[RMDB]
RNA sequence: GGGAACGACUCGAGUAGAGUCGAAAAACGAGCGUUAUCAUUAAAUGGAAAUAAUCAAGCAGCCAAGGUGGUCAAUAGAUUAUUAUUUGAAACCGCCACGAAGUUGCAGCCGCCAGCUUUGGAGCGCCUAUAAUCCUCGUUUCGACGAGGAUUAUAGAAAAGAAACAACAACAACAAC
Reactivity to 2A3 in 0.01 (KOAc 150mM, MgCl2 10mM, bicine 150mM(pH8.5), 24C), signal-to-noise 2, nucleotides 027 to 126: a000c100g020a040g020c030g000u040u150a190u190c030a050u020u190a100a200a140u040g050g050a070a070a100u160a110a110u300c100a120a030g030c000a000g000c020c030a050a060g060g000u040g020g000u040c000a020a060u070a140g010a010u010u300a090u160u020a040u000u300u000g040a210a100a010c000c000g020c040c020a080c030g030a080a010g000u040u010g010c030a010g040c040c020g030c000c000a030g000c040u100u000u020g010g060a000g000c010g000c000
Reactivity to DMS in 0.01 (KOAc 150mM, MgCl2 10mM, bicine 150mM(pH8.5), 24C), signal-to-noise 4, nucleotides 027 to 126: a130c080g000a090g010c020g020u000u010a070u010c040a080u010u010a050a110a090u010g010g010a090a060a080u010a070a080u010c070a120a180g000c070a030g010c020c020a100a130g020g030u000g020g020u000c030a050a050u000a030g010a100u010u010a060u000u000a080u000u000u010g000a060a090a060c100c010g010c010c040a080c160g000a070a080g010u010u000g020c040a110g000c140c100g000c040c030a010g010c120u000u000u000g000g000a080g000c070g000c110